[RMDB]
RNA sequence: GGGAACGACUCGAGUAGAGUCGAAAAGAAAUCUUCGGAUUUCCAUCGACCUUUGUGAGAGACAUGCUGAGAAGGCUGCGCUCACCCAUUGGGUGAGCGAACUACAGCCCAUCCAGCAACAGCUCUCACUCUGGUAAUUCAGCCUCUUCGGAGGCAAUUAAUUACCCGUAUUCGUACGGGUAAUUAAAAAAGAAACAACAACAACAAC
Reactivity to DMS in 0.01 (KOAc 150mM, MgCl2 10mM, bicine 150mM(pH8.5), 24C), signal-to-noise 1, nucleotides 027 to 156: g000a030a030a000u010c010u000u010c300g090g040a080u000u000u000c020c000a260u000c040g010a110c020c000u000u020u000g020u000g010a030g000a010g040a100c050a300u000g000c030u030g020a150g050a140a120g000g100c020u000g000c000g040c040u000c010a030c000c020c030a280u000u010g050g060g130u000g020a050g090c060g020a010a060c020u000a100c000a020g000c000c010c000a130u000c020c000a040g000c030a020a030c050a100g000c010u000c000u010c000a020c040u030c020u000g020g020u000a020a180u000u020c090a170g000c020c000u000c000u000u000c300g070g010a020g010g050c020a000a020
Reactivity to 2A3 in 0.01 (KOAc 150mM, MgCl2 10mM, bicine 150mM(pH8.5), 24C), signal-to-noise 2, nucleotides 027 to 156: g010a000a010a010u030c020u090u140c280g060g000a000u000u000u000c020c000a180u140c090g140a030c010c000u000u010u040g000u000g000a010g000a000g040a050c010a130u030g000c030u030g010a060g010a300a060g030g000c010u010g000c000g020c010u000c000a010c000c000c230a300u200u300g010g000g000u010g040a000g040c000g020a030a010c070u130a040c040a010g000c000c000c000a090u010c000c000a000g030c010a010a010c020a020g030c000u000c000u000c000a000c000u000c000u000g060g010u030a050a070u210u170c050a040g050c010c020u050c030u040u160c300g120g010a000g000g050c020a000a030
The record gives the reactivity of an RNA of 207 nucleotides to DMS and 2A3.
The reactions ran in a buffer of 150 mM KOAc, 10 mM MgCl2 and 150 mM bicine (pH 8.5), at 24 C.
High DMS reactivity at an A or C suggests that its Watson-Crick edge is free.
DMS adducts were read by reverse transcription with MarathonRT.
2A3 is a SHAPE reagent: it acylates the 2'-hydroxyl of flexible nucleotides of all four kinds.
The data come from the RNA Mapping Database (RMDB), library RNAMAK.
Values are in units of 0.01, from 0 to 300, in steps of 10.